The record gives the reactivity of an RNA of 207 nucleotides to 2A3 and DMS. The 2A3 profile rests on 1,399 reads. Values cover nucleotides 27 to 156.

RNA sequence: GGGAACGACUCGAGUAGAGUCGAAAAGAUCUAUGUGGAAGCUCAAGGACUCAGCCAAGGAUGGGAAAGCAUGCUUCCGUGUCUAAGUCGUUCGCGUCCUUGCCAUCCGAAACGUACGCGCCGUACGGAAACCAUCCAACGAAGGCCUCGCUGCAUGUACGGCAGGUAAAUUCGUUUACCUGCCGUAAAAAGAAACAACAACAACAAC
Reactivity to 2A3 in 0.01 (KOAc 150mM, MgCl2 10mM, bicine 150mM(pH8.5), 24C), signal-to-noise 2, nucleotides 027 to 156: g030a030u080c030u070a060u130g070u110g030g030a020a010g010c010u010c090a060a070g040g000a020c030u040c140a030g040c010c010a130a040g020g010a020u030g020g000g050a080a050a010g060c030a020u100g000c030u020u000c020c020g010u040g030u020c080u090a040a050g010u040c010g040u060u060c060g020c020g040u080c000c040u010u060g000c010c030a050u090c030c020g040a070a130a040c040g050u030a030c020g060c070g050c170c040g020u040a010c020g030g000a080a000a000c030c010a020u000c000c040a040a050c070g100a060a020g020g000c000c020u040c020g030c030u100g020c050a070u130g010
Reactivity to DMS in 0.01 (KOAc 150mM, MgCl2 10mM, bicine 150mM(pH8.5), 24C), signal-to-noise 1, nucleotides 027 to 156: g000a110u000c020u020a070u020g000u000g000g040a090a110g010c020u000c010a090a110g000g020a050c030u010c050a180g000c110c040a070a190g010g020a060u010g030g030g000a080a130a120g020c100a050u010g020c020u010u010c040c000g000u000g030u000c050u010a070a070g010u000c040g000u000u010c030g050c100g040u000c020c000u030u010g000c060c010a060u020c050c010g000a090a040a060c040g000u000a070c070g000c030g050c090c030g000u010a040c000g000g000a040a030a150c030c010a000u030c040c010a000a090c000g040a110a110g000g010c030c040u000c100g020c020u010g070c020a100u010g020
Conditions: 150 mM KOAc, 10 mM MgCl2 and 150 mM bicine (pH 8.5), 24 C.
For 2A3 the reverse transcriptase was SuperScript II with manganese.
For DMS, 2,058 sequencing reads were counted.
It was measured as part of the RMDB library OK3TST.